[RMDB]
RNA sequence: GGGAACGACUCGAGUAGAGUCGAAAAGUCCAUCAUGCACGCCGACAUGGGGCUGGGAGAAGACUCUCGCACGGCGUUGAAGGCGUCUAUAGACAUUUCCGCAAACGCCACGUCAGGACCCAGAUGGGCUAGUCGGAUCAUUCGUGAUCCGACUAGCAAAAGAAACAACAACAACAAC
Reactivity to 2A3 in 0.01 (KOAc 150mM, MgCl2 10mM, bicine 150mM(pH8.5), 24C), signal-to-noise 2, nucleotides 027 to 126: g000u020c000c010a050u120c010a010u110g060c030a020c140g100c010c080g010a140c060a140u120g020g000g040g060c030u060g020g080g010a060g020a170a040g110a120c030u020c010u060c040g000c020a070c060g000g000c000g010u000u040g040a080a000g040g000c020g040u040c060u090a300u110a060g050a030c040a090u150u160u030c070c030g000c090a040a050a000c000g000c000c000a030c060g000u000c040a090g000g060a030c030c020c000a060g030a090u170g000g070
Reactivity to DMS in 0.01 (KOAc 150mM, MgCl2 10mM, bicine 150mM(pH8.5), 24C), signal-to-noise 2, nucleotides 027 to 126: g040u000c030c020a070u010c020a070u000g020c070a060c130g000c030c070g030a140c060a080u000g000g020g000g000c000u000g040g010g000a090g000a140a200g020a120c070u000c020u000c080g020c140a210c140g000g030c000g000u000u000g000a040a300g010g000c300g000u000c010u000a100u000a100g070a050c050a140u000u000u010c010c040g020c130a110a030a030c010g000c020c000a090c100g010u000c010a050g000g010a160c000c010c020a110g010a100u000g010g000
Chemical mapping of a 177-nucleotide RNA with 2A3 and DMS. The DMS profile rests on 801 reads. The RNA was probed in 150 mM KOAc, 10 mM MgCl2 and 150 mM bicine (pH 8.5) at 24 C. 2A3 is a SHAPE reagent: it acylates the 2'-hydroxyl of flexible nucleotides of all four kinds. For DMS the reverse transcriptase was MarathonRT.